[RMDB]
RNA sequence: GGGAACGACUCGAGUAGAGUCGAAAAAAUGAUAUACUAAGACGGGCUAUAAGUUGAGUUUCAUGAGGAAAGAGGGACUACUUACAGUAACAAAGAAACAGGCAAGGGCGAUGGAGUAGUUAGUAUCGCUACCGUCUAAGACUUCUUCCUGCAGACCGAUGGCGGACUUAUUCGUAAGUCCGCCAUCAAAAGAAACAACAACAACAAC
Reactivity to 2A3 in 0.01 (KOAc 150mM, MgCl2 10mM, bicine 150mM(pH8.5), 24C), signal-to-noise 2, nucleotides 027 to 156: a000a010u180g030a080u110a030u020a110c090u070a070a020g040a010c030g040g000g070c080u100a070u030a120a100g010u000u010g040a040g060u010u000u040c070a060u160g010a000g000g010a070a130a000g050a030g010g030g020a000c000u040a010c030u040u080a010c000a020g030u080a130a070c050a070a080a080g040a020a110a030c040a040g140g010c060a050a120g120g000g000c050g050a020u030g010g030a050g020u020a000g000u010u080a070g010u020a010u110c050g040c070u020a120c000c000g000u000c010u040a020a110g010a110c010u060u020c000u010u040c050c020u040g020c030a060g100a100c060c040
This 207-nucleotide RNA was probed chemically with 2A3.
The data come from the RNA Mapping Database (RMDB), library OK3TST.
The 2A3 profile rests on 824 reads.